[RMDB]
RNA sequence: GGGAACGACUCGAGUAGAGUCGAAAAUCAUGGAACUGGUCCGCUUCUUGCGAGACCGUUGCCGCUUGUGCUUCUUAGGUCGGAAGUACAUUCUAGCUCCAGCUAGUCACGUAGAAAGUGCCCUGGGUAGUCUAUUCUCUUUCGAGAGAAUAGACUAAAAAGAAACAACAACAACAAC
Reactivity to 2A3 in 0.01 (KOAc 150mM, MgCl2 10mM, bicine 150mM(pH8.5), 24C), signal-to-noise 6, nucleotides 027 to 126: u080c010a040u130g030g000a050a030c090u200g010g020u010c000c010g020c020u090u130c080u240u300g020c020g010a240g000a110c010c000g000u000u030g130c000c010g020c030u000u040g010u010g000c000u010u020c000u040u130a130g130g050u110c050g020g000a020a000g010u010a000c000a000u040u010c050u070a020g020c040u020c030c000a000g010c010u040a020g080u090c020a010c050g030u050a050g150a210a130a030g060u030g020c010c010c010u020g080g000g020
Reactivity to DMS in 0.01 (KOAc 150mM, MgCl2 10mM, bicine 150mM(pH8.5), 24C), signal-to-noise 7, nucleotides 027 to 126: u010c100a110u010g010g010a050a040c040u010g030g000u000c010c020g010c010u000u010c270u010u010g020c010g010a110g010a010c000c000g010u000u000g010c020c030g010c110u000u000g010u000g000c010u000u000c000u000u010a110g010g020u000c160g000g010a030a010g010u000a010c010a030u000u000c020u000a040g000c050u010c070c080a130g010c070u000a040g010u010c050a040c070g010u010a120g010a070a100a120g010u000g000c070c060c020u000g010g010g020